[RMDB]
RNA sequence: GGGAACGACUCGAGUAGAGUCGAAAAACGGAUGGUACGCCAUCCGACCAUUGGGUAGAAGCGUUCAAUCAGCACCGUGACGGUGCAGAUGGGAAAUUGCCCAUGAUACGCACCAUACGUGGUGCAAAAAAGCCAUCGGUGUUCGCACCGAUGGCAACUUAGAUAAAUUGUUCGCAAUUUAUCUAAGAAAAGAAACAACAACAACAAC
Reactivity to DMS in 0.01 (KOAc 150mM, MgCl2 10mM, bicine 150mM(pH8.5), 24C), signal-to-noise 2, nucleotides 027 to 156: a180c030g010g000a030u010g010g020u000a130c300g080c070c010a020u000c010c000g040a040c000c010a140u000u000g010g020g030u000a070g020a130a100g000c120g020u010u000c020a050a020u000c040a090g020c010a020c000c000g040u010g010a120c190g050g040u000g020c000a000g000a020u000g000g030g000a010a150a110u000u010g000c010c000c020a020u010g020a080u010a050c090g000c000a050c010c000a080u000a090c140g030u000g000g060u000g000c000a000a000a050a030a060a040g020c020c010a000u030c000g040g000u000g010u000u000c270g020c020a070c000c010g000a000u010g010g030c000a000a000
Reactivity to 2A3 in 0.01 (KOAc 150mM, MgCl2 10mM, bicine 150mM(pH8.5), 24C), signal-to-noise 3, nucleotides 027 to 156: a010c000g000g000a000u000g010g010u060a050c210g060c050c000a000u000c000c000g000a020c000c000a090u060u110g020g000g010u050a050g030a150a020g050c050g030u040u040c050a060a060u000c020a030g000c000a000c000c010g120u190g230a140c250g000g000u000g000c010a010g000a000u010g030g020g000a020a140a100u070u030g010c000c000c010a000u040g030a010u030a030c100g000c010a010c000c000a020u040a120c190g070u050g000g000u000g000c000a000a000a000a090a040a000g000c010c000a000u000c010g000g000u010g030u060u050c110g030c070a000c000c000g000a000u000g000g000c000a000a000
An RNA of 207 nucleotides, treated with DMS and 2A3 and read out base by base.
DMS adducts were read by reverse transcription with MarathonRT.
Conditions: 150 mM KOAc, 10 mM MgCl2 and 150 mM bicine (pH 8.5), 24 C.